Structure probing data (DMS and 2A3) for a 177-nucleotide construct. Conditions: 150 mM KOAc, 10 mM MgCl2 and 150 mM bicine (pH 8.5), 24 C. Values are in units of 0.01, from 0 to 300, in steps of 10. The 2A3 profile rests on 8,858 reads.
RNA sequence: GGGAACGACUCGAGUAGAGUCGAAAAUCGCGCCCAGGAGCGGCGAGCUAGCGGACGCAAAGACUGGGCAUGCUCCGCGGCGGCGCAGGUUUUGGUCACAAGUAGGAAGAAGCCAGUGCACCAGACCACUAUUAACACACUUCGGUGUGUUAAUAGUAAAAGAAACAACAACAACAAC
Reactivity to DMS in 0.01 (KOAc 150mM, MgCl2 10mM, bicine 150mM(pH8.5), 24C), signal-to-noise 7, nucleotides 027 to 126: u010c050g020c010g020c010c010c030a300g000g000a040g030c040g010g010c030g000a060g010c020u000a270g010c030g000g010a110c190g020c040a050a080a120g000a100c020u000g010g020g020c030a070u010g010c000u000c010c010g010c230g020g010c080g010g020c010g010c050a090g020g010u000u000u010u000g010g010u000c020a040c030a070a100g020u000a060g000g010a130a140g010a110a150g010c020c040a100g010u000g000c110a040c020c010a060g010a070c060c030
Reactivity to 2A3 in 0.01 (KOAc 150mM, MgCl2 10mM, bicine 150mM(pH8.5), 24C), signal-to-noise 6, nucleotides 027 to 126: u040c010g000c010g000c000c010c010a010g040g000a020g000c020g040g010c030g010a020g000c020u020a020g020c040g130g170a090c160g030c050a120a100a020g060a190c020u060g020g180g040c030a050u090g000c010u000c000c000g040c110g100g020c130g000g010c020g000c010a040g020g010u010u050u160u090g010g000u010c010a010c010a100a130g070u090a080g180g080a100a160g040a070a010g100c020c040a010g010u010g010c040a010c010c000a010g000a010c010c010